[RMDB]
RNA sequence: GGGAACGACUCGAGUAGAGUCGAAAAUCGAUGCGGAUGGAGGCCAAACGCAGUGAACUGCUCAAAGACCGCUUUGGUAACUAUGUCGGCAUUAAGAGUAAGUUAACCGUGUCCAAGAAUAAGGUAGAGAUCGCCAUGUAUUCGUACAUGGCGAUCUAAAAGAAACAACAACAACAAC
Reactivity to DMS in 0.01 (KOAc 150mM, MgCl2 10mM, bicine 150mM(pH8.5), 24C), signal-to-noise 1, nucleotides 027 to 126: u000c070g010a070u010g000c040g000g010a120u000g020g000a070g000g020c050c020a030a070a060c120g040c020a010g000u000g010a040a100c070u000g000c060u000c120a050a150a140g000a010c070c010g000c010u000u000u010g010g010u150a120a100c020u000a060u000g010u010c050g000g010c010a030u000u000a050a110g000a060g000u000a040a070g010u000u000a110a090c000c030g000u000g010u000c100c200a070a090g000a020a090u000a060a060g010g030u010a140g000
An RNA of 177 nucleotides, treated with DMS and read out base by base. The RNA was probed in 150 mM KOAc, 10 mM MgCl2 and 150 mM bicine (pH 8.5) at 24 C.